[RMDB]
An RNA of 177 nucleotides, treated with 2A3 and read out base by base. For 2A3 the reverse transcriptase was SuperScript II with manganese. Conditions: 150 mM KOAc, 10 mM MgCl2 and 150 mM bicine (pH 8.5), 24 C. For 2A3, 926 sequencing reads were counted. It was measured as part of the RMDB library TTRDES.
RNA sequence: GGGAACGACUCGAGUAGAGUCGAAAAGAUAUGGAAUGCUCUUCUUUUGACGAAGGUGGUUCGGAAACGAACCAUCCUUCGAUAAGAAGGCAUUCCUAAGUCAAAAGUAUAAUCUUCGGAUUAUACAGAGUAGGAGGUGGUUCGCCACCUCCUACUCAAAAGAAACAACAACAACAAC
Reactivity to 2A3 in 0.01 (KOAc 150mM, MgCl2 10mM, bicine 150mM(pH8.5), 24C), signal-to-noise 1, nucleotides 027 to 126: g020a000u020a000u180g000g030a010a030u030g020c120u100c000u300u000c040u000u260u300u300g300a300c180g000a000a000g020g000u010g000g010u000u010c000g000g000a010a010a010c040g000a000a000c000c020a000u010c000c000u010u000c000g020a020u020a040a000g000a000a010g010g020c020a000u000u040c000c010u000a000a000g010u010c030a000a000a300a030g020u030a010u000a000a000u020c020u030u150c300g140g000a010u000u000a000u030a000c040a030